[RMDB]
RNA sequence: GGGAACGACUCGAGUAGAGUCGAAAACAUGUAACUCGAGAUAGCGUCGGGCAAGGGACUUUAAUGAAAUGCGAUAAACGUUGGUUACAUUGCGGUAUUCACUGGCAUCAGGUCUCCAGGAACCCAGUCACGGAUCAAUUUUCGAAUUGAUCCGUGAAAAAGAAACAACAACAACAAC
Reactivity to DMS in 0.01 (KOAc 150mM, MgCl2 10mM, bicine 150mM(pH8.5), 24C), signal-to-noise 4, nucleotides 027 to 126: c110a100u040g000u030a070a080c030u000c060g020a140g010a090u000a030g020c070g000u020c040g010g020g020c030a050a070g000g010g020a060c060u030u000u000a050a120u010g000a040a060a100u030g000c040g010a090u020a080a060a120c080g010u010u020g010g020u010u000a080c070a080u000u020g000c030g020g030u000a080u010u020c060a070c070u000g000g020c050a050u010c060a050g000g010u010c030u000c030c040a070g000g010a080a160c030c000c010a120g000
Reactivity to 2A3 in 0.01 (KOAc 150mM, MgCl2 10mM, bicine 150mM(pH8.5), 24C), signal-to-noise 5, nucleotides 027 to 126: c030a000u110g030u120a070a010c010u030c090g050a040g010a060u080a070g060c040g020u030c060g010g000g030c070a070a110g040g010g010a040c020u060u080u130a140a100u150g080a100a030a030u140g000c050g070a080u110a110a120a010c060g040u040u000g050g010u070u060a030c010a020u050u140g020c020g000g020u070a150u020u080c020a020c120u030g030g000c000a020u030c010a090g080g030u030c020u000c010c000a000g000g050a020a010c000c000c000a000g050